[RMDB]
RNA sequence: GGGAACGACUCGAGUAGAGUCGAAAAUCUGAAUCUAAUUUCAAAGAUGUCGUCGGUUUGAAAAUGCGUCAAAAUGGACAUGAAGCAAAACUUGUAUCCUUAGACGAAUUUAUUGAAACGGCUAAACCCAUUCGUUGCGGUUCGCCGCAACGAAUGGAAAAGAAACAACAACAACAAC
Reactivity to 2A3 in 0.01 (KOAc 150mM, MgCl2 10mM, bicine 150mM(pH8.5), 24C), signal-to-noise 2, nucleotides 027 to 126: u010c010u090g100a050a000u030c060u150a170a130u040u100u150c050a090a120a120g000a020u030g050u190c020g000u000c000g070g040u060u000u030g020a000a000a000a000u030g020c000g000u000c060a060a060a110a110u240g000g000a000c000a040u100g200a090a030g060c060a070a060a030a170c050u010u030g030u090a060u100c010c010u060u090a050g000a000c030g000a040a040u040u030u010a260u080u030g000a040a030a030c010g040g000c000u040a090a160a160c000
Record summary:
Chemical mapping of a 177-nucleotide RNA with 2A3. Conditions: 150 mM KOAc, 10 mM MgCl2 and 150 mM bicine (pH 8.5), 24 C.